[RMDB]
Overview
Structure probing data (DMS and 2A3) for a 207-nucleotide construct. The reactions ran in a buffer of 150 mM KOAc, 10 mM MgCl2 and 150 mM bicine (pH 8.5), at 24 C. 2A3 is a SHAPE reagent: it acylates the 2'-hydroxyl of flexible nucleotides of all four kinds. For 2A3, 949 sequencing reads were counted.
RNA sequence: GGGAACGACUCGAGUAGAGUCGAAAAUGACUGUUGGGCCCUAGCAUCCCCAACAGUCUAAUGAUGUAGUGGUGUGGAGUACGCGAGAGCGUACUCAGCAUCCGAGAGGAUGCGAUUCCGACCCACAUUAUUGCAUCUAAGGGUCGGUGGCUAGGGAAUGACUAGGACUAUUCGUAGUCCUAGUCAUAAAAGAAACAACAACAACAAC
Reactivity to DMS in 0.01 (KOAc 150mM, MgCl2 10mM, bicine 150mM(pH8.5), 24C), signal-to-noise 1, nucleotides 027 to 156: u020g000a060c000u000g050u000u000g020g040g000c000c060c000u050a070g030c000a210u000c030c000c010c000a010a000c000a010g000u010c010u000a010a080u000g020a040u000g020u000a060g000u000g040g040u010g000u010g000g030a010g000u020a010c000g000c000g000a300g000a300g030c000g050u000a000c000u010c000a030g010c000a000u000c000c060g030a300g000a240g030g020a100u020g160c030g010a200u010u010c010c020g000a090c000c020c000a060c030a070u000u010a050u000u000g010c020a060u010c040u010a180a110g020g000g010u000c000g010g000u000g000g000c000u000a020g030g000g020a180
Reactivity to 2A3 in 0.01 (KOAc 150mM, MgCl2 10mM, bicine 150mM(pH8.5), 24C), signal-to-noise 1, nucleotides 027 to 156: u060g010a010c000u000g010u010u000g010g020g010c000c000c000u070a010g000c040a170u280c030c000c000c000a040a000c000a010g000u000c000u000a000a040u090g040a030u060g010u070a060g040u060g150g000u010g000u050g060g010a030g040u000a000c000g000c030g020a020g000a000g050c000g000u000a000c000u010c030a000g030c000a000u000c000c000g040a060g000a000g040g010a010u000g000c040g000a040u220u070c080c020g010a020c010c010c000a030c010a010u010u080a030u030u020g010c020a030u000c020u080a010a080g070g010g020u040c050g000g060u050g000g000c000u000a000g000g000g030a030